[RMDB]
RNA sequence: GGGAACGACUCGAGUAGAGUCGAAAACACAGCCGACUUAAUCGGAGAGCGGUUACACGCGAGGAAGAUGAAAUUAUUACAUCAGUAGACUCGAGAUUACUACAACUUGCGUUGCUAUCUCAAAUAAAUGGAUUUUAUGUUUCGACAUAAAAUCCAUAAAAGAAACAACAACAACAAC
Reactivity to DMS in 0.01 (KOAc 150mM, MgCl2 10mM, bicine 150mM(pH8.5), 24C), signal-to-noise 5, nucleotides 027 to 126: c070a120c160a140g010c030c010g000a080c110u010u010a110a150u000c050g010g000a100g010a090g030c120g010g010u000u000a080c100a070c030g010c010g010a040g000g000a100a130g020a030u000g000a090a090a150u020u010a100u010u010a130c020a000u000c020a090g010u000a050g010a100c100u000c070g000a100g000a110u020u010a070c030u000a020c040a120a150c050u010u000g010c060g000u000u000g010c050u000a060u000c010u010c020a060a080a080u010a030a070
Reactivity to 2A3 in 0.01 (KOAc 150mM, MgCl2 10mM, bicine 150mM(pH8.5), 24C), signal-to-noise 6, nucleotides 027 to 126: c070a000c020a000g050c010c010g070a160c070u110u190a120a100u220c060g040g010a030g020a000g070c040g000g030u050u090a070c070a000c050g010c010g000a000g040g040a080a140g000a030u040g050a070a070a080u290u250a130u150u170a090c010a020u010c010a000g020u010a010g040a060c040u010c150g060a080g010a140u080u150a060c010u000a010c000a070a020c010u020u020g000c010g020u040u080g010c010u050a050u120c010u000c030a040a100a050u180a060a210